[RMDB]
RNA sequence: GGGAACGACUCGAGUAGAGUCGAAAAGAUAUGGAUGAUACACUAUGGCGAAGAACAUGCUCGGAAACGAGCAUGGGAGCCAAGUGUGAUCAUCCUAAGUCAAAACAGCAAAGUUCGCUUUGCUGAACGAGAAAUUAGUGUUCGCACUAAUUUCUCGAAAAGAAACAACAACAACAAC
Reactivity to DMS in 0.01 (KOAc 150mM, MgCl2 10mM, bicine 150mM(pH8.5), 24C), signal-to-noise 4, nucleotides 027 to 126: g000a030u010a300u020g010g000a010u000g000a000u000a030c000a000c000u010a170u010g020g010c000g000a110a150g000a120a200c010a010u000g010c010u000c000g000g000a090a140a200c000g010a000g010c000a010u000g000g000g010a120g010c000c010a010a020g010u000g010u000g000a020u000c000a000u000c000c000u000a020a090g010u010c040a090a070a120a230c020a000g000c000a000a010a010g010u000u000c220g000c000u000u000u000g010c000u000g010a030a130
Reactivity to 2A3 in 0.01 (KOAc 150mM, MgCl2 10mM, bicine 150mM(pH8.5), 24C), signal-to-noise 3, nucleotides 027 to 126: g050a020u090a070u160g010g000a000u000g010a000u020a020c020a030c040u170a300u300g000g000c030g290a300a010g000a050a000c010a000u010g000c000u000c000g030g020a070a100a050c020g010a000g000c000a010u000g000g010g000a010g000c000c020a010a020g000u010g000u070g030a010u000c000a000u000c000c000u000a050a000g010u000c050a010a020a090a240c020a010g000c010a020a010a000g030u110u240c300g050c130u020u010u000g010c000u000g020a050a060